The record gives the reactivity of an RNA of 177 nucleotides to DMS and 2A3.
[RMDB]
RNA sequence: GGGAACGACUCGAGUAGAGUCGAAAACAUCAGUCGUUCGCGACUGAUGAAACGUGCAAGCGCUGCACGAAAAAGUCGAUCGAAAACCGAUCGACAAGCGCUAAAGAUAGGCCUUCGGGCCUAUCAACACAUAAACAUGGUUCGCCAUGUUUAUGUGAAAAGAAACAACAACAACAAC
Reactivity to DMS in 0.01 (KOAc 150mM, MgCl2 10mM, bicine 150mM(pH8.5), 24C), signal-to-noise 7, nucleotides 027 to 126: c010a010u000c010a010g010u000c000g020u000u010c240g030c010g000a010c000u000g010a000u000g000a060a080a120c000g010u000g000c000a120a040g010c000g010c010u000g000c000a000c000g020a020a060a070a040a030g010u000c010g000a000u000c000g000a130a090a100a180c300c010g010a000u000c000g000a000c000a010a000g010c000g020c000u000a080a110a120g000a010u000a000g000g010c000c000u000u010c210g030g020g010c000c000u000a000u000c000a090a180
Reactivity to 2A3 in 0.01 (KOAc 150mM, MgCl2 10mM, bicine 150mM(pH8.5), 24C), signal-to-noise 8, nucleotides 027 to 126: c000a000u000c000a000g010u000c000g040u060u100c220g000c010g100a000c000u000g000a000u000g000a010a010a000c000g000u000g000c020a090a050g000c010g000c010u010g010c010a010c030g170a130a010a000a000a010g000u000c000g000a000u000c000g060a030a030a040a250c110c000g000a000u000c000g000a000c000a000a000g000c010g000c000u010a020a010a000g000a000u000a000g010g000c020c020u040u100c270g070g000g000c000c000u010a000u000c000a000a000
The reactions ran in a buffer of 150 mM KOAc, 10 mM MgCl2 and 150 mM bicine (pH 8.5), at 24 C.